Chemical mapping of a 177-nucleotide RNA with 2A3 and DMS. Reactivities are given for positions 27 through 126. Source: RMDB library OK1LIB, as collected in RNAgym. For 2A3, 415 sequencing reads were counted.
RNA sequence: GGGAACGACUCGAGUAGAGUCGAAAAACAGUAUUCUACGAAUGCAACAAAUUUUUAUGCCGGAACUUAUGUUGGAACAAAUUCUUUAAGUGACCAGAUAGGCUGCACGCAGAAUACGAGCAGCGAGCAUGAGGGUGAUCUUCGGAUCACCCUCAUGAAAAGAAACAACAACAACAAC
Reactivity to 2A3 in 0.01 (KOAc 150mM, MgCl2 10mM, bicine 150mM(pH8.5), 24C), signal-to-noise 1, nucleotides 027 to 126: a010c040a010g000u040a020u000u000c010u020a020c080g030a290a090u020g040c020a080a050c000a060a110a100u130u140u040u060u010a200u160g030c000c000g040g020a020a000c000u000u000a000u080g270u110u150g060g000a020a000c080a030a250a070u140u020c010u010u130u000a080a010g020u040g050a100c050c000a030g010a250u160a050g070g000c000u000g030c020a020c030g030c000a010g000a020a000u080a000c000g000a000g000c110a000g090c020g200a010g100
Reactivity to DMS in 0.01 (KOAc 150mM, MgCl2 10mM, bicine 150mM(pH8.5), 24C), signal-to-noise 2, nucleotides 027 to 126: a120c100a150g000u000a030u010u020c000u000a020c090g020a180a060u020g040c010a100a070c060a110a020a110u070u100u070u000u040a060u060g040c090c030g000g000a300a010c090u020u000a020u000g050u000u000g030g000a050a040c300a030a000a030u020u040c000u020u000u030a040a060g020u000g020a110c020c000a080g000a040u050a000g000g000c110u000g020c000a230c000g020c040a010g000a040a000u020a030c000g000a010g060c140a040g000c120g000a030g000